[RMDB]
RNA sequence: GGGAACGACUCGAGUAGAGUCGAAAAGGGUGGCGAUCCAACCGGGACGGGUCGCGGCGGACCCGGCUACAAGUUCGCCGACGAGUUCCACCCCGAGCUGCAAUUCGACAAGCCCUAUCUGCUCGCGGUAUGCUGCCUGAUUCGUCAGGCAGCAUACAAAAGAAACAACAACAACAAC
Reactivity to DMS in 0.01 (KOAc 150mM, MgCl2 10mM, bicine 150mM(pH8.5), 24C), signal-to-noise 1, nucleotides 027 to 126: g020g000g090u000g000g000c020g000a120u000c220c050a090a110c130c120g000g000g010a050c170g010g040g000u000c050g000c070g030g020c050g000g000a050c000c040c110g000g000c000u010a060c160a150a160g000u000u000c000g000c000c000g000a150c010g040a050g000u000u000c000c060a140c060c040c000c080g050a050g000c060u000g020c190a110a200u030u000c020g000a300c000a090a220g020c050c000c020u010a050u000c030u000g000c000u000c040g000c190g000
Reactivity to 2A3 in 0.01 (KOAc 150mM, MgCl2 10mM, bicine 150mM(pH8.5), 24C), signal-to-noise 3, nucleotides 027 to 126: g050g000g000u050g050g000c020g010a020u020c030c000a000a130c040c010g010g010g030a050c080g010g000g010u030c010g000c000g000g000c010g030g000a060c000c010c000g010g040c040u140a090c040a150a060g020u010u000c000g000c010c000g020a090c000g000a010g030u100u090c040c030a030c080c000c000c020g060a070g010c000u080g000c040a050a300u060u050c040g020a050c050a080a070g010c000c010c020u040a070u050c000u030g010c010u020c030g060c040g080

This 177-nucleotide RNA was probed chemically with DMS and 2A3. For 2A3 the reverse transcriptase was SuperScript II with manganese. Reactivities are given for positions 27 through 126. The DMS profile rests on 1,154 reads. 2A3 is a SHAPE reagent: it acylates the 2'-hydroxyl of flexible nucleotides of all four kinds.